[RMDB]
RNA sequence: GGGAACGACUCGAGUAGAGUCGAAAAUUGUUACUGCGGCGCAUGGAAGCGAUUAACGAGUCGCUCCAUCCACCGAUGGAUAAUCGGGUACGCGAGGCUUGUCAGUACAUCAGCGAUCACCUGGCAGGACGGAAUCGAUAUUCGUAUCGAUUCCGUCAAAAGAAACAACAACAACAAC
Reactivity to 2A3 in 0.01 (KOAc 150mM, MgCl2 10mM, bicine 150mM(pH8.5), 24C), signal-to-noise 2, nucleotides 027 to 126: u030u020g060u030u090a020c000u030g000c010g040g000c020g000c050a010u020g000g040a100a050g000c020g040a020u050u020a140a120c170g010a080g040u000c000g000c000u000c010c000a020u040c020c000a050c000c000g020a020u030g100g000a150u180a260a030u070c030g000g090g020u050a030c050g020c030g040a030g130g020c050u090u150g120u140c020a000g040u030a030c020a080u080c050a010g050c040g100a130u070c020a020c090c010u020g080g000c030a020g000
Reactivity to DMS in 0.01 (KOAc 150mM, MgCl2 10mM, bicine 150mM(pH8.5), 24C), signal-to-noise 3, nucleotides 027 to 126: u000u000g010u000u010a050c030u000g000c030g000g010c040g040c150a030u010g000g010a040a060g040c030g000a010u000u010a140a190c230g030a170g020u000c020g020c020u000c000c010a000u000c110c090a100c010c000g000a040u000g000g000a100u010a110a060u000c000g000g000g030u020a060c120g000c060g000a050g000g000c050u000u010g010u010c030a010g010u010a040c130a060u000c080a110g030c060g000a040u000c080a060c120c010u010g000g010c090a120g000